This 177-nucleotide RNA was probed chemically with DMS.
The reactions ran in a buffer of 150 mM KOAc, 10 mM MgCl2 and 150 mM bicine (pH 8.5), at 24 C.
The DMS profile rests on 1,215 reads.

[RMDB]
RNA sequence: GGGAACGACUCGAGUAGAGUCGAAAAGAUAUGGACCAUACGAGCCGAUAAGGUGCACUCGGAAACGAGUGGCACCUUUUGACGGCUCGGUGGUCCUAAGUCAAACAUAGCUCUUCGGAGCUAUGAACUACCCUUUUGCGUUCGCGCAAAAGGGUAGAAAAGAAACAACAACAACAAC
Reactivity to DMS in 0.01 (KOAc 150mM, MgCl2 10mM, bicine 150mM(pH8.5), 24C), signal-to-noise 1, nucleotides 027 to 126: g020a060u000a280u010g000g000a030c000c010a040u000a110c000g010a040g000c010c000g000a040u000a030a020g020g030u000g020c000a030c020u000c000g060g000a090a070a060c020g000a010g030u000g000g000c000a020c000c000u050u000u000u000g000a210c250g000g000c000u010c000g010g020u010g000g010u000c000c000u000a000a050g010u010c030a200a070a220c000a000u000a000g020c000u000c000u000u020c250g050g010a000g040c000u020a000u000g000a050a220